The record gives the reactivity of an RNA of 177 nucleotides to DMS and 2A3. The reactions ran in a buffer of 150 mM KOAc, 10 mM MgCl2 and 150 mM bicine (pH 8.5), at 24 C. For 2A3 the reverse transcriptase was SuperScript II with manganese. The 2A3 profile rests on 5,321 reads. For DMS the reverse transcriptase was MarathonRT.
RNA sequence: GGGAACGACUCGAGUAGAGUCGAAAAGUCGCACCUACCGAUUGGAUAUUGUGACGAACCUUGCAGAGUGAGUUCUAUUCAGCAAUGGAUAGUAUUUACGAAGUCAUGUAAAUCGUAAUAUCUAGAGCCUAUUUGAGAUGUUCGCAUCUCAAAUAGGAAAAGAAACAACAACAACAAC
Reactivity to DMS in 0.01 (KOAc 150mM, MgCl2 10mM, bicine 150mM(pH8.5), 24C), signal-to-noise 4, nucleotides 027 to 126: g010u000c040g000c130a090c050c040u000a130c120c080g000a150u010u000g010g000a030u000a020u000u000g020u000g040a020c030g020a160a120c230c020u010u010g020c020a050g000a300g000u020g010a020g010u010u000c000u000a010u000u000c030a010g000c300a090a090u010g000g010a010u010a020g010u000a020u000u000u000a000c000g020a250a190g000u000c070a030u000g000u000a050a190a090u000c010g000u000a010a010u000a030u000c010u000a030g000a160g020
Reactivity to 2A3 in 0.01 (KOAc 150mM, MgCl2 10mM, bicine 150mM(pH8.5), 24C), signal-to-noise 3, nucleotides 027 to 126: g040u000c020g010c070a080c000c020u070a080c050c030g140a130u000u200g010g000a010u010a010u030u020g010u020g010a010c020g010a030a080c020c030u010u030g000c000a010g050a000g080u000g000a000g000u020u020c000u000a010u000u010c000a000g000c030a040a120u020g020g000a000u000a000g000u010a000u010u000u000a010c000g030a090a020g070u100c040a030u050g040u060a030a020a020u020c000g000u010a000a010u020a010u000c020u010a040g040a030g160